[RMDB]
RNA sequence: GGGAACGACUCGAGUAGAGUCGAAAAAGGAAAUCACCAUAUUGCAGAUCCGAGGUGAACGCUAUGUUUUAACUAUCUAACACGGAGUUGGAGUGAUUUAAAGAUCGCUUUGACGAGCCAACAAUGGACUCCAGUUCGUAUUCGUACGAACUGGAGUAAAAGAAACAACAACAACAAC
Reactivity to DMS in 0.01 (KOAc 150mM, MgCl2 10mM, bicine 150mM(pH8.5), 24C), signal-to-noise 2, nucleotides 027 to 126: a070g000g000a000a090a020u020c070a140c060c010a060u030a080u010u060g020c100a030g000a060u000c040c010g000a090g010g020u010g000a000a070c170g040c060u010a030u030g000u000u010u010u010a030a080c070u030a090u020c080u010a060a090c120a070c060g040g000a240g010u000u000g010g000a010g020u000g000a040u000u000u010a110a100a060g000a050u000c000g000c000u000u000u000g080a030c100g020a080g000c000c010a030a120c100a050a050u040g030g010
Reactivity to 2A3 in 0.01 (KOAc 150mM, MgCl2 10mM, bicine 150mM(pH8.5), 24C), signal-to-noise 3, nucleotides 027 to 126: a000g170g020a020a060a030u090c010a000c010c000a000u030a060u160u260g040c040a000g050a100u030c010c030g010a030g000g040u080g030a000a000c020g000c140u070a050u110g080u000u080u060u060a070a030c020u090a050u190c040u040a020a010c060a000c080g010g000a060g010u030u040g000g040a020g000u040g030a030u000u080u300a000a080a000g140a040u000c000g010c010u060u020u010g040a020c000g010a020g000c000c000a030a050c020a030a050u130g110g010